RNA sequence: GGGAACGACUCGAGUAGAGUCGAAAAUUUAUGUGGAUGACAUUGAAAAACAGGCAUCUUAUAAACAUGAGCUACUUAGUGAAGCUUUUCUAAGAAUAAAAUAGGCUUUAAGCAGAUUUUGCUUAUGGAUUAUAGUCUCUGAAUUUUUGAGACGAAAGUAGUAUCACCCAUUCGUGGGUGAUACUACAAAAGAAACAACAACAACAAC
Reactivity to 2A3 in 0.01 (KOAc 150mM, MgCl2 10mM, bicine 150mM(pH8.5), 24C), signal-to-noise 1, nucleotides 027 to 156: u150u110u100a080u040g020u020g060g000a050u020g060a030c030a050u100u160g030a100a070a000a070a000c020a000g040g020c010a030u020c000u080u120a110u100a070a100a010c040a020u080g000a020g070c000u000a000c010u060u090a000g010u020g070a070a000g040c000u120u150u090u000c040u150a190a120g010a150a100u110a020a040a080a080u160a010g050g000c000u030u030u000a070a000g050c040a000g020a220u170u300u190u190g000c000u000u010a000u060g000g010a010u030u030a010u090a060g000u000c000u000c000u030g090a280a300u100u160u030u130u100g000a000g000a050c000g000a050a000a000
Source: RMDB library OK3TST, as collected in RNAgym. This 207-nucleotide RNA was probed chemically with 2A3. The RNA was probed in 150 mM KOAc, 10 mM MgCl2 and 150 mM bicine (pH 8.5) at 24 C. For 2A3, 550 sequencing reads were counted. Values cover nucleotides 27 to 156.